[RMDB]
RNA sequence: GGGAACGACUCGAGUAGAGUCGAAAAGUUCAGCUGUGACGAAGGCCUGAAGCACAGGAUUAGGACUGAAGCGAUGAUGUCCCCUUCCCUACUUCCCCUUGGGGCUCCCUGUGUCAGGGCACAGACUAGGUCUUGUGGCUGGUCUGGCUUGCGGCGCUAGCUAAUAGUUUUUCGAAACUAUUAGCUAAAAAGAAACAACAACAACAAC
Reactivity to DMS in 0.01 (KOAc 150mM, MgCl2 10mM, bicine 150mM(pH8.5), 24C), signal-to-noise 2, nucleotides 027 to 156: g010u010u010c020a130g030c020u000g020u000g040a160c080g000a130a130g060g000c020c020u000g000a150a190g000c020a120c040a030g030g010a160u010u010a070g000g010a110c050u000g020a280a100g020c160g010a150u010g020a230u000g030u000c000c020c010c000u010u000c000c020c000u000a080c100u000u010c020c020c000c060u000u010g000g000g010g010c050u000c030c000c010u000g040u000g020u000c020a300g010g000g020c010a060c030a030g000a060c020u000a090g050g000u000c020u000u010g020u000g020g020c000u000g020g010u000c030u000g030g000c100u000u000g010c000g010g020c020g030c130
Reactivity to 2A3 in 0.01 (KOAc 150mM, MgCl2 10mM, bicine 150mM(pH8.5), 24C), signal-to-noise 3, nucleotides 027 to 156: g030u070u070c060a020g000c020u040g020u050g050a080c070g090a120a060g100g000c010c010u040g020a050a020g010c010a010c000a010g000g030a100u110u210a050g030g000a010c020u060g050a060a010g050c050g100a090u070g020a020u050g100u100c000c010c010c020u100u080c030c000c000u090a170c080u060u070c000c010c000c020u050u110g000g000g040g000c030u050c020c030c000u010g000u020g050u120c040a020g000g000g000c000a010c000a010g010a010c010u070a130g140g030u040c010u090u250g140u180g060g020c000u000g000g010u000c000u000g030g010c010u000u030g020c050g020g000c010g000c070